[RMDB]
RNA sequence: GGGAACGACUCGAGUAGAGUCGAAAAUUAUAUAGCGUGUGCAAGACGCUGAACUUGCCAUGAUCUGGAACUUAAGUGCUGAGGUCCGAGUUCCAGAUCAUCAUUUCGGACCUCAGCACUAAUAUAAUGAAAUCGGAAUAUUCGUAUUCCGAUUUCAAAAAGAAACAACAACAACAAC
Reactivity to DMS in 0.01 (KOAc 150mM, MgCl2 10mM, bicine 150mM(pH8.5), 24C), signal-to-noise 2, nucleotides 027 to 126: u010u000a070u000a100u020a100g010c040g030u010g000u010g000c020a050a040g020a110c080g030c160u020g000a090a060c010u000u010g010c000c050a050u000g010a100u020c050u000g010g010a080a150c190u000u000a040a050g030u000g010c010u000g010a020g010g010u000c010c000g000a030g000u000u010c070c030a100g010a050u000c140a010u000c120a090u010u000u010c030g010g000a000c000c000u000c010a000g000c010a000c000u000a000a030u020a030u010a090a120
The record gives the reactivity of an RNA of 177 nucleotides to DMS. Source: RMDB library M2PK90, as collected in RNAgym. DMS adducts were read by reverse transcription with MarathonRT. For DMS, 1,543 sequencing reads were counted. Reactivities are given for positions 27 through 126. Conditions: 150 mM KOAc, 10 mM MgCl2 and 150 mM bicine (pH 8.5), 24 C.